[RMDB]
RNA sequence: GGGAACGACUCGAGUAGAGUCGAAAAGAAAACUGCUCGGCCGUCAGGUUAGCCGCCUUCAGCGUGCCGGCGAUGGUGUCGCGAUUGGUAUCGGACCAGUUCUGAUAGGUCGACGAAAAGCUCUGGCAUACGCUGCAUAGUUCGCUAUGCAGCGUAUAAAAGAAACAACAACAACAAC
Reactivity to 2A3 in 0.01 (KOAc 150mM, MgCl2 10mM, bicine 150mM(pH8.5), 24C), signal-to-noise 5, nucleotides 027 to 126: g100a000a130a020a040c040u080g060c060u010c000g000g000c000c000g020u030c010a020g010g030u090u150a030g010c020c000g010c000c010u080u070c020a040g010c030g090u110g020c040c010g010g090c060g000a100u170g000g040u140g100u210c010g000c010g130a090u020u190g050g060u120a070u280c070g000g000a080c060c060a050g090u220u070c010u020g000a020u070a200g000g000u000c000g020a040c010g000a030a030a010a010g000c030u000c010u040g020g000c050
Reactivity to DMS in 0.01 (KOAc 150mM, MgCl2 10mM, bicine 150mM(pH8.5), 24C), signal-to-noise 2, nucleotides 027 to 126: g000a050a030a070a120c110u030g020c110u060c000g020g010c000c010g020u000c030a000g000g000u030u000a180g000c020c000g000c000c010u010u000c120a190g030c000g020u030g020c130c010g000g000c170g000a070u060g000g000u020g000u030c040g040c000g000a030u000u020g020g050u030a080u020c000g000g000a080c000c000a110g010u040u010c020u000g000a010u010a100g070g010u000c000g000a020c070g000a020a110a080a090g000c040u000c010u020g000g000c210

An RNA of 177 nucleotides, treated with 2A3 and DMS and read out base by base. For DMS the reverse transcriptase was MarathonRT. The reactions ran in a buffer of 150 mM KOAc, 10 mM MgCl2 and 150 mM bicine (pH 8.5), at 24 C. For DMS, 3,316 sequencing reads were counted. 2A3 adducts were read by reverse transcription with SuperScript II with manganese.